Overview:
An RNA of 207 nucleotides, treated with 2A3 and read out base by base. The 2A3 profile rests on 1,677 reads. 2A3 adducts were read by reverse transcription with SuperScript II with manganese. 2A3 is a SHAPE reagent: it acylates the 2'-hydroxyl of flexible nucleotides of all four kinds. Conditions: 150 mM KOAc, 10 mM MgCl2 and 150 mM bicine (pH 8.5), 24 C.
RNA sequence: GGGAACGACUCGAGUAGAGUCGAAAAACACCAAAACUGAAAACGGAAGGCAAUCCUUCCACGACGAUACUCACUUUCCUUUGAUCGUCGUUACUACUGGCAUAGCCACAAAGGAGAACAAACAUGAGCGCGGACACUGACUUCGGUCAGUGUCCAAGACGUACUUGGUGUUCGCACCAAGUACGUCAAAAGAAACAACAACAACAAC
Reactivity to 2A3 in 0.01 (KOAc 150mM, MgCl2 10mM, bicine 150mM(pH8.5), 24C), signal-to-noise 3, nucleotides 027 to 156: a010c090a110c020c080a090a110a020a030c110u190g090a080a050a030a030c080g020g000a000a010g010g010c130a030a120u190c000c000u010u020c000c000a000c010g000a000c010g000a000u100a180c000u040c130a080c070u030u060u090c020c000u040u010u080g060a030u010c000g040u010c000g000u020u060a030c030u020a040c010u010g000g000c070a240u130a120g020c010c030a050c020a030a070a000g020g000a020g040a070a030c080a050a100a010c110a110u270g060a040g110c180g010c100g010g000a000c000a010c020u000g010a000c000u040u050c100g030g000u000c000a010g000u000g020u000c000c000a000a000